[RMDB]
RNA sequence: GGGAACGACUCGAGUAGAGUCGAAAAUCUGCGCAUCCUCGCGACUAAUGACAACCCUAACCCAGCUCUAUGUGGGUAAAGCCUCUCAUUAGCCGCGCGAACCUCUGCAACGGAAGAUCAUUCAUAGAUUUUAGUCCAUGUUCGCAUGGACUAAAAUAAAAGAAACAACAACAACAAC
Reactivity to 2A3 in 0.01 (KOAc 150mM, MgCl2 10mM, bicine 150mM(pH8.5), 24C), signal-to-noise 8, nucleotides 027 to 126: u040c020u050g020c030g000c030a030u040c010c020u020c000g010c010g020a030c000u000a020a020u030g010a010c040a030a070c040c000c000u030a060a070c010c000c010a100g080c040u040c070u190a140u240g090u060g010g010g010u020a070a010a000g020c010c010u050c010u010c010a010u000u000a000g000c000c000g000c000g000c000g030a030a030c010c010u040c030u080g000c020a060a050c040g030g040a050a020g030a110u100c030a070u160u100c030a030u070a110g070
Reactivity to DMS in 0.01 (KOAc 150mM, MgCl2 10mM, bicine 150mM(pH8.5), 24C), signal-to-noise 6, nucleotides 027 to 126: u020c060u000g020c030g020c060a090u010c050c020u010c020g020c040g030a070c010u000a020a020u000g010a030c160a120a120c120c030c000u010a270a100c020c010c000a040g010c120u000c160u020a080u030g040u000g010g000g010u010a020a090a130g020c090c050u010c230u020c010a010u010u010a030g000c010c000g040c000g000c130g000a040a090c060c010u000c060u010g000c070a030a060c080g010g000a060a050g010a080u000c080a060u010u000c050a070u000a110g000